[RMDB]
RNA sequence: GGGAACGACUCGAGUAGAGUCGAAAAGUUAAAGCAAUAUUCUGAUUGUAACCCAAUGAAAUCAAACUGGAGGAAAACAUAUGGACCAGAAAUUGGGUCCUACAAAAGCAACUACAUGCAUGCAAACUGGGGCAACAUGGCUUAGCAGCAUUUUGCAUACCUAAAUGACGUUCGCGUCAUUUAGGUAAAAAGAAACAACAACAACAAC
Reactivity to 2A3 in 0.01 (KOAc 150mM, MgCl2 10mM, bicine 150mM(pH8.5), 24C), signal-to-noise 3, nucleotides 027 to 156: g060u060u080a070a080a070g030c020a040a050u040a070u170u180c070u120g100a140u070u060g050u060a100a120c000c000c040a020a070u130g100a060a040a030u120c110a130a100a040c050u060g020g010a060g050g060a040a040a050a030c040a040u120a090u160g010g040a020c000c010a010g090a130a160a060u110u050g060g000g000u020c000c010u020a020c050a010a070a000a010g020c030a040a040c010u100a030c050a050u040g030c010a010u060g000c000a000a060a120c070u070g000g010g010g010c010a040a010c010a160u100g090g000c010u030u130a010g040c050a000g000c000a040u010u010u050u120g010c020a060
Reactivity to DMS in 0.01 (KOAc 150mM, MgCl2 10mM, bicine 150mM(pH8.5), 24C), signal-to-noise 2, nucleotides 027 to 156: g000u000u000a040a130a210g010c080a060a070u000a130u010u000c130u040g000a150u010u000g020u000a040a150c030c020c050a080a180u020g020a150a040a080u000c060a060a070a120c050u010g020g000a120g020g000a050a100a100a090c070a090u010a090u000g050g000a120c000c020a100g000a050a050a180u010u000g020g030g000u010c010c000u020a070c070a060a040a060a140g020c060a070a050c020u000a030c040a020u010g010c090a070u010g010c040a020a050a040c040u010g010g010g000g030c010a020a040c060a000u020g000g050c060u000u020a120g050c040a030g010c080a110u020u000u000u000g030c020a300
This 207-nucleotide RNA was probed chemically with 2A3 and DMS.
The data come from the RNA Mapping Database (RMDB), library OK3TST.